[RMDB]
RNA sequence: GGGAACGACUCGAGUAGAGUCGAAAAGGCAGGGCGCGAAACAGCUCCUCCCGCGCCACGUCCGCAAAGGCGGGGUGGUGCACGUGCGGGUGCAGGCGCGCCCCCACGACCACCGAGAGCCACUGGACAUGUGAGUGUUUUUCGAAACACUCACAUGAAAAGAAACAACAACAACAAC
Reactivity to DMS in 0.01 (KOAc 150mM, MgCl2 10mM, bicine 150mM(pH8.5), 24C), signal-to-noise 6, nucleotides 027 to 126: g010g000c120a130g030g010g020c020g020c000g000a090a080a100c140a130g020c020u000c020c020u000c070c050c030g010c010g000c010c000a040c070g000u010c010c010g020c100a080a120a130g010g020c010g010g010g000g040u000g000g020u010g010c100a030c060g010u000g020c300g010g000g020u000g020c010a150g020g010c090g000c010g000c000c000c010c020c010a060c040g000a080c020c010a060c040c040g000a120g010a130g010c030c040a110c070u010g000g010a300
Reactivity to 2A3 in 0.01 (KOAc 150mM, MgCl2 10mM, bicine 150mM(pH8.5), 24C), signal-to-noise 5, nucleotides 027 to 126: g050g010c070a040g010g020g010c010g000c020g050a080a160a100c060a070g020c020u020c020c010u030c010c020c000g000c000g000c010c000a010c000g150u060c020c010g000c040a180a160a020g260g000c020g010g020g000g000u000g000g010u030g030c060a030c120g050u090g000c070g010g000g020u050g000c030a040g160g060c040g000c000g000c010c000c000c000c000a030c020g030a040c010c010a010c000c020g060a060g010a000g080c000c030a070c070u050g010g010a020